[RMDB]
RNA sequence: GGGAACGACUCGAGUAGAGUCGAAAAGAUAUGGAUAUACCUCAGUACAUAUUCAGCGAAGAACUAUUAUUCUCUCGGAAACGAGAGAAUAAUAGGGAGCUGAUAUGGAACCGGUAUAUCCUAAGUCCUACAAGACUUAGUUCGCUAAGUCUUGUAGAAAAGAAACAACAACAACAAC
Reactivity to DMS in 0.01 (KOAc 150mM, MgCl2 10mM, bicine 150mM(pH8.5), 24C), signal-to-noise 4, nucleotides 027 to 126: g010a090u010a300u000g010g020a000u000a010u000a010c000c000u010c020a070g000u000a160c000a020u000a010u000u020c010a000g000c000g000a070a190g010a190a220c000u000a000u010u000a000u010u000c000u000c000u000c000g010g000a120a150a200c020g010a000g010a000g000a010a000u000a000a000u000a000g000g000g000a060g020c000u010g020a020u000a000u000g000g000a120a100c300c300g000g000u000a000u000a010u000c000c020u000a010a050g000u000c030
Reactivity to 2A3 in 0.01 (KOAc 150mM, MgCl2 10mM, bicine 150mM(pH8.5), 24C), signal-to-noise 2, nucleotides 027 to 126: g060a010u190a070u200g010g000a000u010a000u010a010c000c000u000c010a010g040u030a010c000a010u090a040u230u300c000a000g030c050g260a300a050g100a070a050c000u010a010u000u000a000u000u020c010u000c000u010c010g020g000a090a100a080c010g000a010g000a010g000a000a000u010a000a000u000a020g000g000g010a000g000c010u000g010a000u000a000u000g020g000a000a010c000c000g000g020u000a000u000a000u010c000c000u000a000a010g000u000c010